Annotation: Structure probing data (DMS and 2A3) for a 177-nucleotide construct. The reactions ran in a buffer of 150 mM KOAc, 10 mM MgCl2 and 150 mM bicine (pH 8.5), at 24 C. The 2A3 profile rests on 2,362 reads. 2A3 adducts were read by reverse transcription with SuperScript II with manganese. Source: RMDB library 15KREP, as collected in RNAgym.
[RMDB]
RNA sequence: GGGAACGACUCGAGUAGAGUCGAAAAGGGAACAAGGAAACAGGAGGAGGAUCGGUAGAAAAGAGCGAGACCUCCGAUUCGAGAGCUCCUGGACUCCUCAGCUCUGGAGUCCUCCGACCCGUGAGGUGAGUAAUGUCAAGUUCGCUUGACAUUACUCAAAAGAAACAACAACAACAAC
Reactivity to DMS in 0.01 (KOAc 150mM, MgCl2 10mM, bicine 150mM(pH8.5), 24C), signal-to-noise 2, nucleotides 027 to 126: g000g000g000a030a070c160a170a070g000g000a040a090a160c100a050g010g020a080g010g000a190g010g000a080u000c020g040g000u010a050g000a030a100a060a130g000a090g010c100g000a090g000a170c120c000u000c010c010g020a030u000u000c010g020a150g020a150g000c020u000c020c010u000g030g000a040c090u000c000c000u000c170a090g020c080u010c020u000g010g010a080g000u010c010c050u000c040c050g010a080c050c010c030g000u000g010a100g010g000u000
Reactivity to 2A3 in 0.01 (KOAc 150mM, MgCl2 10mM, bicine 150mM(pH8.5), 24C), signal-to-noise 2, nucleotides 027 to 126: g010g000g000a100a060c040a110a090g040g020a050a070a030c020a030g030g000a010g040g050a040g020g010a040u010c010g010g030u150a020g090a030a120a050a020g090a010g030c050g040a040g070a100c010c010u000c020c010g000a010u000u010c030g030a020g020a030g210c010u000c000c000u000g010g020a020c010u010c000c000u010c020a050g030c040u030c030u070g000g010a010g020u000c040c000u000c020c000g070a060c000c000c020g030u110g070a060g010g160u070